Overview: This 207-nucleotide RNA was probed chemically with 2A3. 2A3 is a SHAPE reagent: it acylates the 2'-hydroxyl of flexible nucleotides of all four kinds. It was measured as part of the RMDB library M2RFPK. 2A3 adducts were read by reverse transcription with SuperScript II with manganese. Values are in units of 0.01, from 0 to 300, in steps of 10.
RNA sequence: GGGAACGACUCGAGUAGAGUCGAAAAACGGAUCGUACGCCAUCCGACCAUUGGGUAGAAGCGUUCAAUCAGCACCGUGACGGUGCAGAUGGGAAAUUGCCCAUGAUACGCACCAUACGUGGUGCGAAAAAGCCAUCGGUGUUCGCACCGAUGGCAACCCUGCACAAUUCUUCGGAAUUGUGCAGGGAAAAGAAACAACAACAACAAC
Reactivity to 2A3 in 0.01 (KOAc 150mM, MgCl2 10mM, bicine 150mM(pH8.5), 24C), signal-to-noise 1, nucleotides 027 to 156: a030c000g000g010a020u020c000g060u080a040c040g040c120c050a010u000c010c000g080a050c000c000a030u060u050g040g000g000u030a030g070a220a000g060c000g040u040u020c040a020a020u020c010a020g000c000a000c000c020g110u160g300a120c300g000g030u020g000c020a000g010a010u000g000g070g000a050a040a070u070u000g000c000c000c010a030u060g050a010u040a070c030g010c000a020c000c000a000u030a090c280g080u020g000g000u000g000c020g010a000a000a000a010a000g000c000c000a000u000c000g000g000u030g030u060u000c090g020c040a000c000c000g000a000u000g000g000c000a000a000